[RMDB]
RNA sequence: GGGAACGACUCGAGUAGAGUCGAAAACGCGCGCUUGGCGUCGUGAUACAUGCUGCAGUACUGACUCACCGCGUCCCCCAUGGCCUCGGGGGGCCAGGGCCCCAGGCGGUCGGGCGUGUCCCCGACCGAACUUCCUGACAUUCGUGUCAGGAAGUUCAAAAGAAACAACAACAACAAC
Reactivity to 2A3 in 0.01 (KOAc 150mM, MgCl2 10mM, bicine 150mM(pH8.5), 24C), signal-to-noise 9, nucleotides 027 to 126: c040g010c000g010c010g020c050u060u140g080g000c030g040u070c030g050u060g030a060u060a140c060a050u140g030c030u040g030c040a030g020u050a080c030u070g040a050c010u020c040a070c010c020g020c020g030u040c020c010c000c000c000a110u120g070g010c020c040u040c100g040g000g000g010g010g010c010c010a020g010g040g020c000c000c010c000a020g020g040c000g000g000u000c000g010g010g010c080g060u090g030u120c040c000c000c000g010a010c010c000
Reactivity to DMS in 0.01 (KOAc 150mM, MgCl2 10mM, bicine 150mM(pH8.5), 24C), signal-to-noise 5, nucleotides 027 to 126: c100g020c040g010c030g020c050u010u020g010g000c040g020u000c030g010u020g010a130u010a060c100a070u040g000c030u000g000c050a080g010u000a060c060u020g000a090c030u020c030a090c060c020g000c100g000u000c020c030c010c010c040a080u010g010g000c010c020u000c110g010g000g000g000g000g000c010c040a070g010g000g000c010c000c010c010a080g010g000c040g010g030u000c000g000g000g010c100g000u010g010u010c080c010c000c010g010a020c040c020